[RMDB]
RNA sequence: GGGAACGACUCGAGUAGAGUCGAAAAUUGACGGUGGGGUGGUCUUUACUCCAAUGAGCAUCGAACCACAGCGAAGUGGGUUCAUCGCAAAGAUGCAUUAGUCACGGAGCCACGUUGACAUGGCUAACCUAUACGGACUCUUCGGAGUCCGUAUAGGAAAAGAAACAACAACAACAAC
Reactivity to DMS in 0.01 (KOAc 150mM, MgCl2 10mM, bicine 150mM(pH8.5), 24C), signal-to-noise 2, nucleotides 027 to 126: u000u000g010a040c050g000g030u010g010g000g020g030u010g030g000u000c090u000u000u000a090c030u000c000c120a060a120u010g000a110g000c000a020u000c030g010a070a120c040c010a040c050a110g020c150g010a140a070g000u010g000g000g010u010u000c020a100u000c110g030c130a060a090a140g010a050u010g010c060a150u020u020a060g050u010c030a050c110g000g000a160g010c050c030a050c080g010u010u000g020a150c150a060u000g010g000c020u010a070a180
Reactivity to 2A3 in 0.01 (KOAc 150mM, MgCl2 10mM, bicine 150mM(pH8.5), 24C), signal-to-noise 1, nucleotides 027 to 126: u040u020g020a010c020g050g000u010g020g000g000g000u040g030g050u090c060u070u080u090a040c050u050c040c000a000a080u150g000a010g000c010a010u000c030g070a060a050c000c000a060c030a040g130c210g080a130a040g030u080g040g070g040u060u090c110a060u060c020g100c150a120a110a000g030a020u030g030c020a120u040u100a050g040u000c000a000c060g070g000a010g000c000c000a000c000g050u040u120g090a080c040a110u050g020g000c000u010a040a020